[RMDB]
RNA sequence: GGGAACGACUCGAGUAGAGUCGAAAAUGAUUCAUGAGCCUCUUUGGGAAGAAACAACCCAGCUUCUUGUAAUUCCAGGAGGUGCUGAUGUACCUUAUCAUAAUGUGUUGCAUGGACUGGGGACAGCAUUAGGGUAUUAGUUCGCUAAUACCCUAAUAAAAGAAACAACAACAACAAC
Reactivity to DMS in 0.01 (KOAc 150mM, MgCl2 10mM, bicine 150mM(pH8.5), 24C), signal-to-noise 9, nucleotides 027 to 126: u030g000a100u020u020c060a060u020g000a130g010c020c010u000c070u010u020u010g000g010g010a060a040g000a110a080a050c120a090a130c010c020c010a020g010c190u010u000c010u000u000g010u010a040a070u010u010c300c080a100g010g000a010g010g010u000g010c020u000g010a120u040g020u010a050c010c020u000u010a090u040c090a090u030a090a090u030g010u010g000u000u000g000c020a020u000g000g000a040c020u000g000g000g000g010a100c170a070g010c170
Reactivity to 2A3 in 0.01 (KOAc 150mM, MgCl2 10mM, bicine 150mM(pH8.5), 24C), signal-to-noise 9, nucleotides 027 to 126: u130g030a050u110u090c070a040u190g070a030g060c000c020u120c090u150u180u170g070g020g030a070a060g040a050a180a030c070a030a040c010c000c000a020g040c130u030u010c020u020u040g030u040a050a060u080u070c110c110a040g040g030a000g000g020u010g010c020u090g070a200u220g000u030a030c000c010u040u060a080u180c050a100u110a290a150u190g030u010g010u050u020g000c020a020u030g000g010a020c010u010g010g000g020g040a030c060a020g080c010
An RNA of 177 nucleotides, treated with DMS and 2A3 and read out base by base. The RNA was probed in 150 mM KOAc, 10 mM MgCl2 and 150 mM bicine (pH 8.5) at 24 C. For 2A3 the reverse transcriptase was SuperScript II with manganese. DMS adducts were read by reverse transcription with MarathonRT.